[RMDB]
RNA sequence: GGGAACGACUCGAGUAGAGUCGAAAAGGUACACGCUGGAUUAGCGAGAGGCCCGCGGUGCCGUUUCUGGUUGCAUUAUCCGGUAUCAUCUCGGGCGUGCGUGAUCAUUCGAUGACCGUGCGGCUCGCGUGGCUAAACUGUUCGCAGUUUAGCCACGAAAAGAAACAACAACAACAAC
Reactivity to 2A3 in 0.01 (KOAc 150mM, MgCl2 10mM, bicine 150mM(pH8.5), 24C), signal-to-noise 3, nucleotides 027 to 126: g050g000u040a030c180a020c110g010c020u080g030g030a150u160u190a060g060c030g050a060g030a060g100g090c030c010c000g000c020g000g010u060g010c020c010g010u000u180u000c050u090g030g000u050u090g000c040a050u070u050a050u160c020c010g070g000u070a110u140c050a090u030c040u050c000g000g010g000c020g010u030g000c000g060u150g050a160u030c020a050u140u230c120g150a100u070g030a040c000c010g000u020g000c000g120g000c030u020c020g030
Reactivity to DMS in 0.01 (KOAc 150mM, MgCl2 10mM, bicine 150mM(pH8.5), 24C), signal-to-noise 3, nucleotides 027 to 126: g000g000u000a040c070a120c040g020c030u000g050g000a120u010u000a070g030c020g010a090g000a120g010g000c000c000c040g000c040g000g000u000g010c020c010g020u000u000u000c060u000g030g010u000u000g020c080a070u010u000a110u010c030c020g000g000u000a080u010c130a090u020c070u000c010g000g000g010c110g020u000g010c010g020u000g010a070u000c020a100u000u020c210g000a090u000g020a070c050c000g000u010g000c050g010g000c020u000c010g010